RNA sequence: GGGAACGACUCGAGUAGAGUCGAAAAUAAUUAGUCUGGAUACCCGAAAGAAUGGAAAGCAGGGACCCAGACAGAUCCUUGCACAACCGUGUUCGUAGCAGGGCGAGGCCUGGAGGUGCGAUGGGGAUCUCAACGGGGCAGCUGCCGUCUUGCUGGACCGUUCUUAAAGAUUCGUCUUUAAGAACGGAAAAGAAACAACAACAACAAC
Reactivity to DMS in 0.01 (KOAc 150mM, MgCl2 10mM, bicine 150mM(pH8.5), 24C), signal-to-noise 2, nucleotides 027 to 156: u000a050a100u000u000a080g000u000c050u030g020g020a140u000a130c020c010c020g000a110a100a130g000a130a100u010g010g000a170a140a170g020c090a090g000g000g020a100c020c000c010a030g030a110c090a040g010a060u000c000c000u000u020g030c040a080c060a110a160c010c020g020u000g020u010u010c070g030u000a170g020c150a090g000g010g010c020g020a120g000g000c060c020u020g030g010a170g020g000u000g010c050g010a120u000g030g020g030g020a000u000c020u000c040a030a140c070g010g020g030g020c080a090g020c000u000g000c010c030g000u000c050u000u020g020c020u000g000g000a300
Reactivity to 2A3 in 0.01 (KOAc 150mM, MgCl2 10mM, bicine 150mM(pH8.5), 24C), signal-to-noise 4, nucleotides 027 to 156: u110a010a040u120u140a030g010u020c030u030g020g010a050u120a290c020c020c030g040a050a090a040g130a050a090u140g050g060a180a060a020g050c060a070g010g020g020a010c000c020c010a000g000a010c000a000g000a010u000c010c010u020u140g000c030a030c020a050a140c040c030g060u040g030u100u050c030g030u040a040g040c060a040g030g050g000c020g020a010g040g000c020c030u040g030g000a050g000g050u030g010c030g040a110u190g040g000g000g020a010u030c040u010c030a060a090c050g000g010g020g000c020a050g050c030u060g040c020c010g030u020c040u060u100g010c010u030g000g030a010